[RMDB]
RNA sequence: GGGAACGACUCGAGUAGAGUCGAAAAAAGGUUCAGACCAUAACCCGAAUAAGUUUUGGCCAUGUGAACAACGAACCGCAGAUGAGCCAUAACAAGCUGUCGAGCAGCGUCUACGUCGUCUUCGUAGGUCCAAUAUGCUAUUCGUAGCAUAUUGGACAAAAGAAACAACAACAACAAC
Reactivity to 2A3 in 0.01 (KOAc 150mM, MgCl2 10mM, bicine 150mM(pH8.5), 24C), signal-to-noise 5, nucleotides 027 to 126: a000a000g080g000u090u100c060a050g080a120c010c000a030u060a030a060c010c000c000g030a050a120u210a150a040g030u020u020u040u040g020g000c010c010a030u040g050u040g170a120a050c050a040a040c140g100a080a050c040c030g020c020a020g030a220u080g030a030g020c000c010a010u020a030a020c040a060a040g020c020u050g040u140c090g080a060g060c020a000g000c000g030u020c010u010a010c010g100u100c010g050u020c080u130u010c060g030u040a060g090
Reactivity to DMS in 0.01 (KOAc 150mM, MgCl2 10mM, bicine 150mM(pH8.5), 24C), signal-to-noise 5, nucleotides 027 to 126: a050a040g000g020u000u010c210a120g010a110c020c010a090u010a070a090c010c020c030g000a130a090u000a100a100g000u000u000u000u010g000g000c010c010a050u000g010u010g010a060a050c120a110a060c130g020a070a060c150c090g020c020a050g000a060u000g010a090g020c010c030a040u000a050a040c070a070a090g010c050u000g000u000c130g010a090g020c050a100g020c020g000u010c020u000a030c040g000u010c130g000u000c120u000u000c030g010u000a060g010
Structure probing data (2A3 and DMS) for a 177-nucleotide construct. 2A3 adducts were read by reverse transcription with SuperScript II with manganese.